RNA sequence: GGGAACGACUCGAGUAGAGUCGAAAAGCUGAAGCGCACUCAUAGCGACCGGGGGAUCUUGGAGGUGGACGAUGGGAGAUUCAUCAAGAAAGUGCCCCAGACCAGCGUGGCCCCCACAUACAAGCUGUCAUAAAUGGGCGUUCGCGCCCAUUUAUGAAAAAGAAACAACAACAACAAC
Reactivity to DMS in 0.01 (KOAc 150mM, MgCl2 10mM, bicine 150mM(pH8.5), 24C), signal-to-noise 1, nucleotides 027 to 126: g020c040u010g010a170a100g010c040g000c000a070c120u010c060a190u010a100g020c060g000a160c130c050g000g000g020g010g000a050u000c010u010u000g010g020a280g000g010u000g010g000a020c100g010a130u030g030g010g000a100g000a170u000u010c040a000u000c040a140a250g010a080a040a020g030u010g000c050c010c040c000a080g000a250c040c030a030g000c100g020u000g010g000c020c020c010c000c020a100c160a060u010a070c190a120a080g010c080u000g020
The record gives the reactivity of an RNA of 177 nucleotides to DMS. It was measured as part of the RMDB library OK2TRN. Conditions: 150 mM KOAc, 10 mM MgCl2 and 150 mM bicine (pH 8.5), 24 C.